[RMDB]
RNA sequence: GGGAACGACUCGAGUAGAGUCGAAAAACGCUUGGCGGCAGCAGCAGCGGAGAGGCGGCGCGGCAGCCAGCGCGAAAACGCGCCUCUUGCAUCAAGUAUUCACCGGCAGUCGUGCCGACGCGUGGAGCCAUCCUGGCGCGUUCGCGCGCCAGGAUGGAAAAGAAACAACAACAACAAC
Reactivity to 2A3 in 0.01 (KOAc 150mM, MgCl2 10mM, bicine 150mM(pH8.5), 24C), signal-to-noise 1, nucleotides 027 to 126: a010c080g030c010u010u080g030g000c000g060g000c020a000g000c010a050g000c000a020g080c060g080g030a040g000a000g100g020c000g030g000c020g010c020g030g000c000a000g100c010c050a070g000c000g030c030g000a000a090a110a020c070g030c000g030c000c020u080c000u040u050g000c010a060u040c020a160a000g040u040a120u100u120c070a100c000c000g060g000c000a040g000u100c030g060u030g030c000c000g020a030c010g000c020g030u080g030g000a010g040
This 177-nucleotide RNA was probed chemically with 2A3. Values cover nucleotides 27 to 126. For 2A3 the reverse transcriptase was SuperScript II with manganese. Conditions: 150 mM KOAc, 10 mM MgCl2 and 150 mM bicine (pH 8.5), 24 C.